[RMDB]
RNA sequence: GGGAACGACUCGAGUAGAGUCGAAAAGCAGCCAAGGGAGAGAACAUCGUCCUCAUCGGACACAAGAAGCACGUUGAGAUCCAGGGAGUGGUUGCGGAGGCCCCCGAGCAGACGACCGUCCUGGAGACUCAUAGGCCUUUUUCGAAAGGCCUAUGAGAAAAGAAACAACAACAACAAC
Reactivity to DMS in 0.01 (KOAc 150mM, MgCl2 10mM, bicine 150mM(pH8.5), 24C), signal-to-noise 2, nucleotides 027 to 126: g000c080a050g030c030c030a080a090g000g000g010a040g030a060g020a070a080c080a140u000c170g030u000c020c000u000c230a060u020c160g050g020a070c040a100c120a090a060g020a100a070g000c080a090c080g010u010u000g000a030g000a290u000c030c000a030g000g020g030a060g050u000g000g020u000u020g000c030g020g000a190g000g000c000c020c050c050c040g000a140g030c020a100g020a060c050g000a020c020c020g000u000c010c000u000g010g000a020g020a110
Chemical mapping of a 177-nucleotide RNA with DMS.
The DMS profile rests on 1,123 reads.
The data come from the RNA Mapping Database (RMDB), library OK2TRN.
The reactions ran in a buffer of 150 mM KOAc, 10 mM MgCl2 and 150 mM bicine (pH 8.5), at 24 C.
Values cover nucleotides 27 to 126.
Values are in units of 0.01, from 0 to 300, in steps of 10.
DMS adducts were read by reverse transcription with MarathonRT.